[RMDB]
RNA sequence: GGGAACGACUCGAGUAGAGUCGAAAACUGGAAUUUUCCUACUUCGCUUGCACCACCGCUGCUGGGCGCUUCUAUUUUUUGCUCUGUGCCGCUCGACCGGAGUUGGGGGCGGGCGCAGGUGGGCGUGGAGUAGGAUCAUAUUCGUAUGAUCCUACUCAAAAGAAACAACAACAACAAC
Reactivity to DMS in 0.01 (KOAc 150mM, MgCl2 10mM, bicine 150mM(pH8.5), 24C), signal-to-noise 3, nucleotides 027 to 126: c080u020g000g010a100a070u020u020u010u000c000c010u010a090c090u000u000c010g010c050u010u030g010c050a080c000c010a040c060c030g010c090u030g000c010u010g000g010g000c010g010c070u000u050c080u010a020u000u030u020u040u030u020g010c000u000c000u000g010u010g010c060c020g000c030u000c030g010a100c070c030g000g000a110g020u010u010g000g010g010g010g000c030g020g020g010c020g020c040a030g010g020u010g010g010g000c130g030u000g000
Reactivity to 2A3 in 0.01 (KOAc 150mM, MgCl2 10mM, bicine 150mM(pH8.5), 24C), signal-to-noise 9, nucleotides 027 to 126: c050u090g090g090a100a130u090u060u060u060c010c000u020a070c030u050u060c020g030c040u040u120g030c040a120c070c000a030c020c020g060c060u090g010c020u030g030g040g040c000g010c000u100u030c050u050a300u090u120u030u000u170u160g030c030u040c030u070g080u080g040c020c010g020c010u040c010g170a180c020c020g120g060a170g050u190u300g040g000g010g000g010c000g010g020g020c020g000c010a030g000g020u050g030g010g000c030g020u050g070

Background: The record gives the reactivity of an RNA of 177 nucleotides to DMS and 2A3. Conditions: 150 mM KOAc, 10 mM MgCl2 and 150 mM bicine (pH 8.5), 24 C. Values are in units of 0.01, from 0 to 300, in steps of 10.